[RMDB]
RNA sequence: GGGAACGACUCGAGUAGAGUCGAAAAGAUGUGGGUGUCGAUGCCGCCGGCGGUGACGAUCAUGCCUUCGCCGGCGAUGAUCUCGGUGGCGGCGCCGAUAACGAUGUCGACGCCGGGCUGGAUGUCCAGAUAGAACCUUCUUCGGAAGGUUCUAUCUAAAAGAAACAACAACAACAAC
Reactivity to DMS in 0.01 (KOAc 150mM, MgCl2 10mM, bicine 150mM(pH8.5), 24C), signal-to-noise 3, nucleotides 027 to 126: g010a070u010g010u000g000g000g030u000g020u010c000g010a030u010g000c070c020g000c000c000g000g000c020g020g000u020g000a050c120g000a070u000c160a080u020g000c010c000u000u010c200g010c150c110g000g000c010g000a000u010g010a030u010c030u000c000g000g000u000g020g010c060g000g000c000g010c040c000g000a050u020a080a110c140g000a040u000g000u000c000g010a050c050g000c010c020g000g000g010c060u010g000g010a090u020g000u010c060c080
Reactivity to 2A3 in 0.01 (KOAc 150mM, MgCl2 10mM, bicine 150mM(pH8.5), 24C), signal-to-noise 4, nucleotides 027 to 126: g050a030u140g000u090g100g020g030u040g000u010c010g000a050u070g030c000c000g000c010c000g030g060c020g010g030u090g060a040c070g020a060u090c030a060u160g020c000c000u050u060c070g030c060c040g010g000c000g010a000u000g010a000u000c010u000c030g030g230u000g010g010c000g020g020c000g030c010c000g020a050u070a140a040c060g040a070u110g000u020c020g020a000c030g000c000c000g030g030g000c020u020g080g020a060u050g050u040c040c020